Source: RMDB library OK3TST, as collected in RNAgym. This 207-nucleotide RNA was probed chemically with DMS and 2A3. Values cover nucleotides 27 to 156. The RNA was probed in 150 mM KOAc, 10 mM MgCl2 and 150 mM bicine (pH 8.5) at 24 C. The 2A3 profile rests on 1,513 reads.
[RMDB]
RNA sequence: GGGAACGACUCGAGUAGAGUCGAAAAGAUGCCUCGUGCGAAUCAUUCAUGCGUGAACCAUUCUCACGAAUCGCGGAGCUUGAAAAGCAAGUUGCGUUCCUGACUGGUGAACUUCAGGCGGCUAUCGCCACGAUCGAGAAGGUUCGGGAAAUCAUGCCAGGAGCACAUAUUUCGAUAUGUGCUCCUGAAAAGAAACAACAACAACAAC
Reactivity to DMS in 0.01 (KOAc 150mM, MgCl2 10mM, bicine 150mM(pH8.5), 24C), signal-to-noise 2, nucleotides 027 to 156: g030a160u000g020c060c050u000c100g000u010g040c060g020a080a040u000c020a020u000u000c010a080u000g000c070g060u000g080a070a020c040c050a120u000u000c040u000c010a070c040g030a050a050u000c010g010c050g060g020a300g010c020u000u010g000a100a110a090a270g000c010a080a120g010u000u020g000c000g020u010u000c000c020u000g000a120c050u000g050g000u000g000a080a050c070u000u000c020a240g010g000c070g050g000c040u000a070u000c070g030c020c010a090c030g000a080u000c030g000a150g000a130a080g000g000u000u000c010g060g020g000a060a030a200u000c020a070u000g020c120
Reactivity to 2A3 in 0.01 (KOAc 150mM, MgCl2 10mM, bicine 150mM(pH8.5), 24C), signal-to-noise 3, nucleotides 027 to 156: g030a020u130g000c020c000u090c060g070u150g030c060g030a040a060u060c040a040u130u080c050a070u110g060c070g100u100g010a000a000c020c010a270u040u000c050u020c010a060c050g060a080a140u090c010g000c000g030g080a020g000c010u040u060g020a050a070a020a020g040c030a060a090g080u140u160g080c050g000u030u040c000c000u000g000a020c020u060g030g120u190g120a080a040c020u050u030c030a020g000g000c000g020g000c040u100a150u280c040g000c020c020a000c010g090a070u130c060g000a000g010a100a040g010g000u050u000c000g000g020g000a030a080a010u080c070a000u120g020c000